[RMDB]
RNA sequence: GGGAACGACUCGAGUAGAGUCGAAAAGAGCUCCGAGCGGCGUUAGCGCCCUCUGCGAAGCGCCCUGCGAUGCCCCAGCCACUGUGAACCUUUCUGCCUGCCCAGAUACACUCAACCCAGGACGAAACAUAAUAUACAAGUUCGCUUGUAUAUUAUGAAAAGAAACAACAACAACAAC
Reactivity to DMS in 0.01 (KOAc 150mM, MgCl2 10mM, bicine 150mM(pH8.5), 24C), signal-to-noise 9, nucleotides 027 to 126: g010a180g010c020u000c030c040g000a060g030c300g010g020c010g020u000u000a150g020c040g010c050c030c040u000c050u000g020c080g000a110a110g010c040g010c020c010c020u000g010c060g010a100u000g010c040c020c010c040a100g010c030c030a040c050u000g010u010g010a080a090c060c030u000u000u000c040u000g010c030c010u000g010c030c010c030a070g010a100u000a060c090a080c050u000c060a060a100c030c010c010a100g010g010a070c110g010a100a090a160
Reactivity to 2A3 in 0.01 (KOAc 150mM, MgCl2 10mM, bicine 150mM(pH8.5), 24C), signal-to-noise 4, nucleotides 027 to 126: g030a010g000c030u000c030c020g010a020g020c140g020g000c010g060u100u110a050g080c010g000c040c020c010u040c050u030g030c050g040a080a010g010c000g010c010c000c000u020g030c040g060a060u110g010c000c010c000c010a000g010c000c000a040c030u060g030u040g080a040a050c010c000u030u100u060c020u040g010c010c010u020g010c000c000c010a020g000a020u070a020c050a010c020u060c020a020a050c020c010c000a000g050g040a020c040g090a020a030a010